[RMDB]
An RNA of 207 nucleotides, treated with DMS and 2A3 and read out base by base. The reactions ran in a buffer of 150 mM KOAc, 10 mM MgCl2 and 150 mM bicine (pH 8.5), at 24 C. Values are in units of 0.01, from 0 to 300, in steps of 10. For 2A3 the reverse transcriptase was SuperScript II with manganese. The data come from the RNA Mapping Database (RMDB), library RNAMAK. DMS adducts were read by reverse transcription with MarathonRT. The 2A3 profile rests on 2,346 reads.
RNA sequence: GGGAACGACUCGAGUAGAGUCGAAAAGUGGCUUUCUUCGGAAAGCCACAAAAAAGAUAUGGAAUCUAGAAGGACUUGGACCUCCUCAUCGGAAACGAUGAUGGAGCUAGUCCCUAGAUUCCUAAGUCAAAAAACCUUAUUCUUCGGAAUAAGGUAACAGUCUUACCUUGUUCGCAAGGUAAGACUGAAAAGAAACAACAACAACAAC
Reactivity to DMS in 0.01 (KOAc 150mM, MgCl2 10mM, bicine 150mM(pH8.5), 24C), signal-to-noise 1, nucleotides 027 to 156: g040u000g040g030c010u000u000u000c010u000u000c300g020g000a040a000a000g040c010c010a010c000a000a000a120a070a070a060g000a050u000a230u000g000g030a070a000u000c000u000a000g020a160a190g040g000a020c020u000u000g020g020a090c300c000u000c000c010u010c010a010u010c000g070g020a070a050a120c020g020a070u000g010a040u000g050g000a010g020c000u000a000g000u010c010c010c050u000a000g000a000u000u000c020c000u000a000a080g020u010c000a000a020a110a090a040a060c020c010u000u000a020u000u000c020u020u040c280g060g000a020a010u000a010a020g020g020u000a000a020
Reactivity to 2A3 in 0.01 (KOAc 150mM, MgCl2 10mM, bicine 150mM(pH8.5), 24C), signal-to-noise 3, nucleotides 027 to 156: g010u010g000g000c010u040u030u040c020u060u050c230g070g000a000a000a020g000c020c000a010c010a000a000a000a000a000a000g020a010u020a010u020g010g000a000a010u010c000u000a030g070a300a250g190g000a020c080u300u300g090g060a060c010c010u000c010c000u000c010a000u000c000g000g000a010a030a000c000g000a010u010g020a030u090g010g000a000g000c010u030a020g000u000c010c000c010u010a000g000a000u000u010c000c000u000a000a000g000u000c010a020a000a000a070a050a090c000c000u000u000a000u010u000c000u010u090c240g100g000a010a000u000a010a010g000g000u000a000a010